[RMDB]
RNA sequence: GGGAACGACUCGAGUAGAGUCGAAAAAAGACUUCACAAUGGUUUGAUAACUAGGUGCAGGAUGCUGAUUUGAGCCUCUCCCAAUUCUCUAAUAACCUCACUGGAGGUUAACCAGGCAGGGCUCAAUGAGAUGUAAUCCUUUCGAGGAUUACAUCUCAAAAGAAACAACAACAACAAC
Reactivity to DMS in 0.01 (KOAc 150mM, MgCl2 10mM, bicine 150mM(pH8.5), 24C), signal-to-noise 3, nucleotides 027 to 126: a080a060g000a080c000u000u000c020a030c060a070a120u020g000g020u000u010u020g010a190u010a060a030c030u020a040g000g010u000g000c020a020g020g020a100u010g000c070u020g010a090u000u000u000g000a040g020c020c010u000c090u000c010c000c040a110a100u020u020c050u010c060u030a110a100u010a040a010c000c000u000c000a230c200u000g000g000a000g010g000u010u000a000a070c140c240a050g000g020c210a080g010g000g010c020u000c010a030a050u000
Reactivity to 2A3 in 0.01 (KOAc 150mM, MgCl2 10mM, bicine 150mM(pH8.5), 24C), signal-to-noise 6, nucleotides 027 to 126: a000a000g050a020c030u030u030c030a020c020a060a300u100g020g060u030u040u160g200a150u140a160a040c010u020a060g090g000u020g020c030a020g040g050a070u090g040c050u030g030a190u050u010u040g000a000g000c010c010u050c010u030c010c010c020a030a090u170u030c050u000c020u010a070a190u060a050a070c000c000u030c050a210c270u200g200g030a010g000g000u020u020a020a030c020c010a020g010g020c030a010g000g000g020c000u000c000a010a020u050